[RMDB]
RNA sequence: GGGAACGACUCGAGUAGAGUCGAAAAUUGCUGGAGGCCAACAAAGCGUACUGGCCAGAGUUACGUUAAUUGUGUGGACUGGCAUCCGUUGGGUGCUGGUCCGUAUUCUUCAGCACAGCUGACGGCGAACGACGAUAAGUUUCGACUUAUCGUCGUUAAAAGAAACAACAACAACAAC
Reactivity to DMS in 0.01 (KOAc 150mM, MgCl2 10mM, bicine 150mM(pH8.5), 24C), signal-to-noise 6, nucleotides 027 to 126: u010u010g010c000u000g000g010a030g010g010c120c070a050a020c040a020a060a110g000c010g000u000a020c030u000g010g030c060c060a080g000a080g000u010u000a010c010g010u000u010a110a170u010u000g000u000g030u010g010g010a030c010u000g000g010c010a000u000c000c010g000u000u020g030g020g020u000g000c000u000g000g000u000c000c010g000u000a010u000u010c010u000u000c030a010g010c010a060c300a080g010c060u000g010a100c140g000g010c090g010
Reactivity to 2A3 in 0.01 (KOAc 150mM, MgCl2 10mM, bicine 150mM(pH8.5), 24C), signal-to-noise 3, nucleotides 027 to 126: u090u030g000c000u000g000g030a010g010g010c030c030a010a020c020a020a100a010g000c000g000u010a010c010u050g130g000c030c010a020g030a000g060u130u080a000c010g020u010u070a140a070u190u080g010u000g020u060g030g000a000c010u020g020g000c000a000u020c030c110g220u180u300g010g010g000u010g000c000u010g000g000u000c000c000g000u000a000u000u020c000u000u000c000a000g000c020a000c010a040g100c030u110g040a040c060g020g000c030g030
Record summary: This 177-nucleotide RNA was probed chemically with DMS and 2A3. Values cover nucleotides 27 to 126. Reactivities are rounded to 0.1 and cut off at 0 and 3.